Chemical mapping of a 207-nucleotide RNA with 2A3.
Reactivities are given for positions 27 through 156.
RNA sequence: GGGAACGACUCGAGUAGAGUCGAAAAAGGUGAUUUCUCCUGCACCUUUAUCAAUGGAGGAACUCGACUUUGCUGUGGGUCCCAAAGGGACCUUAGGUGCAGACAGUUACCGGAGGUGAAGUGUGAGCAUAGGUUCGUGUCUUCGGACACGAACCAACCGUUAUCUCACGUUCGCGUGAGAUAACGGAAAAGAAACAACAACAACAAC
Reactivity to 2A3 in 0.01 (KOAc 150mM, MgCl2 10mM, bicine 150mM(pH8.5), 24C), signal-to-noise 1, nucleotides 027 to 156: a000g050g010u020g000a050u040u050u010c000u050c030c020u140g030c010a000c020c000u060u180u110a080u000c080a030a070u300g020g000a010g000g020a020a010c030u010c020g010a010c010u020u010u090g020c050u080g050u160g080g020g000u030c000c000c060a140a180a130g000g020g010a000c010c000u000u090a020g030g010u000g000c000a030g120a240c040a040g040u040u110a020c000c000g080g000a030g000g030u040g000a000a000g100u140g060u080g040a020g010c030a100u100a080g000g020u000u000c000g000u000g000u000c000u060u110c230g010g010a000c020a000c000g000a000a000c000c000a000a010